[RMDB]
RNA sequence: GGGAACGACUCGAGUAGAGUCGAAAACAACUGUUAUCUUGCCACUGCAUUGUUAACACUCCAACAAAUAUAGUUGAAGUUUAAUCCACCUGCUCUACAAAGGGCUGGUGAAGCUGCUAACUUUUGUCGACUAACGGGUUCGCCCGUUAGAAAAGAAACAACAACAACAAC
Reactivity to DMS in 0.01 (KOAc 150mM, MgCl2 10mM, bicine 150mM(pH8.5), 24C), signal-to-noise 4, nucleotides 027 to 129: c060a090a070c140u020g020u000u000a070u000c070u000u000g040c060c130a050c120u080g000c110a070u020u000g030u000u000a050a060c070a100c040u040c000c030a060a070c060a060a090a060u010a100u020a120g000u000u020g000a000a060g020u000u050u000a080a080u060c000c030a020c000c000u020g000c020u000c000u000a110c300a040a000a020g000g000g070c030u030g060g040u010g030a010a030g020c040u020g020c070u050a050a000c060u070u020u000u000g000u000c090g030a220
Reactivity to 2A3 in 0.01 (KOAc 150mM, MgCl2 10mM, bicine 150mM(pH8.5), 24C), signal-to-noise 9, nucleotides 027 to 129: c010a010a020c020u030g020u040u030a080u060c060u070u170g040c030c050a100c070u120g010c040a050u070u100g040u070u080a050a020c030a010c080u000c020c010a010a010c010a020a210a050u300a040u070a180g000u010u010g030a020a000g010u000u040u120a040a050u060c030c010a000c000c010u030g000c000u000c000u030a150c110a100a240a090g000g000g000c000u010g010g000u010g000a010a010g000c010u030g020c010u010a020a050c000u040u020u030u050g090u060c020g030a070
Chemical mapping of a 170-nucleotide RNA with DMS and 2A3. The 2A3 profile rests on 39,584 reads. 2A3 adducts were read by reverse transcription with SuperScript II with manganese.